The record gives the reactivity of an RNA of 177 nucleotides to 2A3 and DMS.
It was measured as part of the RMDB library TTRDES.
For 2A3, 11,342 sequencing reads were counted.
The reactions ran in a buffer of 150 mM KOAc, 10 mM MgCl2 and 150 mM bicine (pH 8.5), at 24 C.

RNA sequence: GGGAACGACUCGAGUAGAGUCGAAAAGAUAUGGACGAGAUAGACAUGCUGGGGUGUCGGAAACGACACCGACAGCAACAGCUAUGUCGUCCUAAGUCAAAGCAAUCGUAGUUCGCUACGAUUGCAACCCAUGCAUUACGUUCGCGUAAUGCAUGGGAAAAGAAACAACAACAACAAC
Reactivity to 2A3 in 0.01 (KOAc 150mM, MgCl2 10mM, bicine 150mM(pH8.5), 24C), signal-to-noise 3, nucleotides 027 to 126: g020a000u020a000u040g010g000a000c000g000a010g020a050u020a010g020a040c280a300u300g020c010u010g070g000g000g010u000g000u000c000g000g020a000a000a020c010g000a000c000a000c010c030g030a030c010a000g020c020a030a020c090a000g000c000u000a010u040g300u060c000g000u000c000c010u000a000a000g000u000c010a070a130a070g000c000a000a010u000c000g010u010a010g050u070u110c300g030c190u000a000c000g000a010u000u020g000c000a010a000
Reactivity to DMS in 0.01 (KOAc 150mM, MgCl2 10mM, bicine 150mM(pH8.5), 24C), signal-to-noise 3, nucleotides 027 to 126: g000a010u000a040u030g000g000a020c000g010a020g020a020u000a000g020a030c020a300u020g040c000u000g000g000g000g010u000g000u000c010g020g000a010a010a030c000g010a020c010a010c010c000g010a140c010a000g040c000a110a030c210a070g010c000u010a000u000g000u000c010g020u000c000c000u000a000a060g000u000c020a090a170a160g020c010a000a010u000c000g040u000a010g020u000u000c240g010c010u000a000c000g000a000u000u000g020c000a030a040